Source information:
The record gives the reactivity of an RNA of 177 nucleotides to 2A3 and DMS. It was measured as part of the RMDB library RFMREP. The RNA was probed in 150 mM KOAc, 10 mM MgCl2 and 150 mM bicine (pH 8.5) at 24 C.
[RMDB]
RNA sequence: GGGAACGACUCGAGUAGAGUCGAAAAUCCAGCAGUAGUCAGCCAUCCGGACAGAACCGUUCCUGUGAUGGUGUUACACUGCUGGGAGAGGAAUGUCUUGUCUUCAUCCGGUUGCCUGCGCCACUGUGUACAGUAUGUUGUUCGCAACAUACUGUACAAAAGAAACAACAACAACAAC
Reactivity to 2A3 in 0.01 (KOAc 150mM, MgCl2 10mM, bicine 150mM(pH8.5), 24C), signal-to-noise 3, nucleotides 027 to 126: u010c000c000a010g010c010a000g000u300a020g030u030c060a000g020c020c010a000u000c000c010g010g020a010c020a040g180a170a110c080c050g110u260u080c020c030u110g020u100g060a020u000g000g000u000g010u000u010a010c020a010c020u010g010c020u000g000g040g010a040g000a010g030g100a120a080u100g070u070c030u070u080g020u010c020u030u030c020a070u020c000c000g030g020u050u090g010c000c010u020g050c040g000c010c010a070c070u070g020u020
Reactivity to DMS in 0.01 (KOAc 150mM, MgCl2 10mM, bicine 150mM(pH8.5), 24C), signal-to-noise 4, nucleotides 027 to 126: u000c000c000a010g020c000a010g000u000a060g030u000c300a300g010c010c000a020u000c010c020g000g000a020c050a160g010a110a130c290c180g010u010u000c000c020u010g060u010g020a000u000g010g020u010g010u000u000a060c040a040c000u000g010c000u000g000g000g010a060g000a100g000g010a070a040u010g010u000c050u000u000g010u010c030u000u000c040a120u000c020c010g000g020u010u010g000c040c010u000g000c050g000c020c050a080c110u000g020u000